[RMDB]
RNA sequence: GGGAACGACUCGAGUAGAGUCGAAAAGAGCGAUUAGACAAAGGGUUAGAGCUACAUAUUAGAUAGCUGUAUAAUCGUUCAAGUUACAUCAAAACAUCUUCAAUAUUUAUUACUUACUUUCCUUUCUGCCAGAGUACGGUAUUCGUACCGUACUCAAUGCAACGUAUUUCUUCGGAAAUACGUUGCAAAAAGAAACAACAACAACAAC
Reactivity to 2A3 in 0.01 (KOAc 150mM, MgCl2 10mM, bicine 150mM(pH8.5), 24C), signal-to-noise 2, nucleotides 027 to 156: g000a000g010c020g020a000u000u000a020g000a020c010a000a070a180g100g030g080u180u090a040g040a000g080c000u000a000c000a010u300a170u110u180a040g270a290u000a000g000c000u010g010u040a030u000a010a000u000c020g000u000u010c010a000a000g010u060u180a120c060a090u120c040a030a100a100a000c010a020u000c050u300u090c040a040a130u070a260u300u220u070a090u020u100a000c010u020u010a030c000u050u020u110c010c020u060u080u040c030u040g090c120c010a040g000a000g000u000a000c000g000g020u000a010u000u020c090g000u010a010c000c000g000u000a000c010u000c000a000a000
Notes: The record gives the reactivity of an RNA of 207 nucleotides to 2A3. The data come from the RNA Mapping Database (RMDB), library M2RFPK. Values cover nucleotides 27 to 156.